Structure probing data (2A3) for a 207-nucleotide construct. Reactivities are given for positions 27 through 156. 2A3 adducts were read by reverse transcription with SuperScript II with manganese.
[RMDB]
RNA sequence: GGGAACGACUCGAGUAGAGUCGAAAAGGGGUCAUAACGUUUGACGUCGUCCACAGGCAACAGCUACACUGAAGCCUCCACGGUGUAGACAUGCCUGGGACGACCGAGUUAUGACGGAGGCACCCAAAAUGGUUGAUAUGUUCGCAUAUCAACCAAAGCACGGAAUAAACUUCGGUUUAUUCCGUGCAAAAGAAACAACAACAACAAC
Reactivity to 2A3 in 0.01 (KOAc 150mM, MgCl2 10mM, bicine 150mM(pH8.5), 24C), signal-to-noise 2, nucleotides 027 to 156: g060g020g050g010u000c000a000u000a000a000c020g040u050u130u300g080a020c000g010u010c020g010u000c010c010a290c030a280g000g040c120a300a060c040a240g000c000u000a000c000a000c000u020g000a140a020g000c010c000u000c000c000a000c000g000g000u010g000u000a000g060a050c070a120u300g010c000c000u000g010g000g010a000c000g010a000c000c000g010a020g000u000u000a000u000g000a000c040g000g000a000g000g000c020a060c000c000c020a020a040a000a070u140g000g000u000u000g010a000u000a000u030g050u040u080c210g000c120a000u000a000u020c010a010a030c000c000a030a000a000